RNA sequence: GGGAACGACUCGAGUAGAGUCGAAAAGUGCCUCGUGUGACGGCGGGGGUCGGUGAAGACCCGUCGAGCUGCGGCGCCGGCGCGUUCCAGGCCGGGAGUCACUGGAGGCACCCCUGGGACGCCGAGCGCGCUUAGCGAGAUUCGUCUCGCUAAGCGCAAAAGAAACAACAACAACAAC
Reactivity to 2A3 in 0.01 (KOAc 150mM, MgCl2 10mM, bicine 150mM(pH8.5), 24C), signal-to-noise 3, nucleotides 027 to 126: g030u040g010c000c000u020c030g080u060g020u020g120a120c010g010g020c030g060g080g020g010g140u080c070g040g200u300g130a140a040g030a070c000c000c000g000u030c000g010a050g000c020u060g010c040g090g000c020g010c020c020g030g020c100g000c020g040u020u030c010c010a010g020g020c040c000g020g030g010a100g040u030c030a040c200u130g190g060a070g050g030c000a020c000c010c000c000u010g000g030g000a010c010g000c020c030g040a050g030c070
Reactivity to DMS in 0.01 (KOAc 150mM, MgCl2 10mM, bicine 150mM(pH8.5), 24C), signal-to-noise 2, nucleotides 027 to 126: g020u000g010c000c010u000c010g030u000g020u000g010a110c040g000g010c030g000g040g000g020g010u000c030g000g010u010g020a140a240g000a100c010c010c010g010u010c030g010a250g000c030u000g010c080g030g000c030g000c030c010g000g000c050g000c080g000u000u000c030c020a090g000g010c040c090g000g000g010a100g020u000c010a030c060u010g020g000a040g000g010c010a060c010c020c030c000u010g000g000g010a040c010g010c070c060g000a100g020c160

Notes: Structure probing data (2A3 and DMS) for a 177-nucleotide construct. Source: RMDB library OK2TRN, as collected in RNAgym. In probing experiments dimethyl sulfate is read out at A N1 and C N3, which are open when not base-paired. The reactions ran in a buffer of 150 mM KOAc, 10 mM MgCl2 and 150 mM bicine (pH 8.5), at 24 C. The 2A3 profile rests on 3,097 reads. Reactivities are given for positions 27 through 126.